[RMDB]
RNA sequence: GGGAACGACUCGAGUAGAGUCGAAAACACUGAGUCUUCGGACUCAGUGAAAAGCUCGAAAAGGACGAAAACGAGCAAUAACAUAAAUAAAGGUCCAAAUAAAAAGUCUAGCGUUCGCGCUAGACAACAUCUGACGAUAGUUCGCUAUCGUCAGAUGAAAAGAAACAACAACAACAAC
Reactivity to 2A3 in 0.01 (KOAc 150mM, MgCl2 10mM, bicine 150mM(pH8.5), 24C), signal-to-noise 2, nucleotides 027 to 126: c000a010c000u000g000a000g000u010c000u040u070c230g000g010a000c000u000c010a000g000u010g000a000a000a000a030g030c010u000c000g030a060a060a100a140g020g000a010c020g070a020a130a090a050c030g010a000g010c020a010a020u140a020a010c030a010u100a090a100a010u190a030a060a010g110g000u010c000c000a040a050a000u100a020a090a010a030a000g000u000c000u010a010g000c010g020u040u030c300g030c010g010c150u000a000g000a000c000a000a010
Reactivity to DMS in 0.01 (KOAc 150mM, MgCl2 10mM, bicine 150mM(pH8.5), 24C), signal-to-noise 1, nucleotides 027 to 126: c020a000c020u010g000a010g000u000c000u000u000c190g040g020a000c000u000c030a000g000u000g000a060a040a120a120g000c000u000c000g000a050a090a080a130g060g020a000c000g010a040a200a060a050c000g030a000g000c000a050a110u010a120a110c140a070u000a020a010a010u020a040a070a190g020g010u000c000c000a080a080a090u000a040a100a160a100a160g040u000c000u000a000g000c000g030u010u010c250g040c040g020c010u000a000g000a000c010a050a110

Conditions: 150 mM KOAc, 10 mM MgCl2 and 150 mM bicine (pH 8.5), 24 C. An RNA of 177 nucleotides, treated with 2A3 and DMS and read out base by base. For 2A3 the reverse transcriptase was SuperScript II with manganese. 2A3 is a SHAPE reagent: it acylates the 2'-hydroxyl of flexible nucleotides of all four kinds. DMS adducts were read by reverse transcription with MarathonRT. For DMS, 805 sequencing reads were counted. For 2A3, 1,822 sequencing reads were counted.